An RNA of 170 nucleotides, treated with DMS and 2A3 and read out base by base. 2A3 adducts were read by reverse transcription with SuperScript II with manganese. For 2A3, 25,420 sequencing reads were counted. Source: RMDB library 15KLIB, as collected in RNAgym. Conditions: 150 mM KOAc, 10 mM MgCl2 and 150 mM bicine (pH 8.5), 24 C.
RNA sequence: GGGAACGACUCGAGUAGAGUCGAAAAAGCUCUCCCAAGAAGAACCAGAAUCCCUCAAGAGAGAGGAGAAUCCCCAUGACGCUGGAAGAGACUUCCGGGUAACCAAGUCAAGGAGAAGGAACGGUAGCACGAUCUGACUUCGGUCAGAUCAAAAGAAACAACAACAACAAC
Reactivity to DMS in 0.01 (KOAc 150mM, MgCl2 10mM, bicine 150mM(pH8.5), 24C), signal-to-noise 9, nucleotides 027 to 129: a080g030c090u000c050u020c030c040c020a100a120g020a090a030g040a020a040c020c070a010g000a130a120u040c050c040c020u040c040a080a120g040a020g020a070g010a000g060g010a000g040a060a100u030c040c020c000c090a150u040g000a090c100g040c060u010g030g030a090a050g010a090g010a100c070u050u030c020c020g050g030g000u000a060a060c130c010a060a050g040u060c060a050a080g030g010a060g000a070a030g040g010a040a020c120g040g000u060a070g030c120a100c150
Reactivity to 2A3 in 0.01 (KOAc 150mM, MgCl2 10mM, bicine 150mM(pH8.5), 24C), signal-to-noise 8, nucleotides 027 to 129: a000g050c010u010c000u010c010c010c000a000a020g070a010a010g010a020a020c050c030a010g030a070a070u080c020c000c000u050c030a090a030g090a010g010a000g000a020g040g020a010g010a020a050u050c040c000c000c010a090u130g020a020c060g000c080u030g010g010a080a020g050a020g010a060c000u040u010c050c000g000g020g010u050a030a030c040c020a110a010g040u070c030a020a030g040g010a040g000a010a020g030g000a070a020c050g020g050u080a020g060c050a020c150